[RMDB]
RNA sequence: GGGAACGACUCGAGUAGAGUCGAAAAGACACUUCGGUGUCAAAAAAGAUAUGGAGGAUCAACCUCCCAUUCGGAAACGAAUGUGGAGGAUGAUCACUCCUAAGUCAAAAACGCGCUUCGGCGCGAAUCCAAUUUAACACUUCGGUGUUAAAUUGGAAAAAGAAACAACAACAACAAC
Reactivity to 2A3 in 0.01 (KOAc 150mM, MgCl2 10mM, bicine 150mM(pH8.5), 24C), signal-to-noise 1, nucleotides 027 to 126: g000a040c020a020c000u110u230c300g120g000u020g000u030c020a120a000a000a070a000a190g020a000u030a010u100g000g000a000g000g000a010u000c000a030a080c010c000u000c000c010c000a010u040u000c000g000g040a080a070a030c010g000a010a010u040g030u180g040g010a000g010g000a000u030g000a000u000c010a120c020u000c000c010u000a190a010g000u000c040a030a030a090a100a100c000g020c000g000c050u080u100c300g230g000c030g000c010g020a000a020
Reactivity to DMS in 0.01 (KOAc 150mM, MgCl2 10mM, bicine 150mM(pH8.5), 24C), signal-to-noise 1, nucleotides 027 to 126: g000a010c000a040c000u010u000c130g060g000u000g010u000c000a010a060a120a130a090a080g000a030u000a300u000g020g000a000g000g010a040u000c000a000a060c010c000u010c000c000c000a000u010u000c000g010g000a110a090a220c020g000a020a010u000g020u010g050g020a020g010g000a000u000g010a020u000c010a020c000u000c000c000u000a010a040g010u030c090a050a070a050a190a140c020g020c000g030c000u010u010c200g060g030c000g020c000g000a030a030
Overview
Chemical mapping of a 177-nucleotide RNA with 2A3 and DMS. The RNA was probed in 150 mM KOAc, 10 mM MgCl2 and 150 mM bicine (pH 8.5) at 24 C. The 2A3 profile rests on 1,959 reads. Source: RMDB library TTRDEL, as collected in RNAgym. Values are in units of 0.01, from 0 to 300, in steps of 10.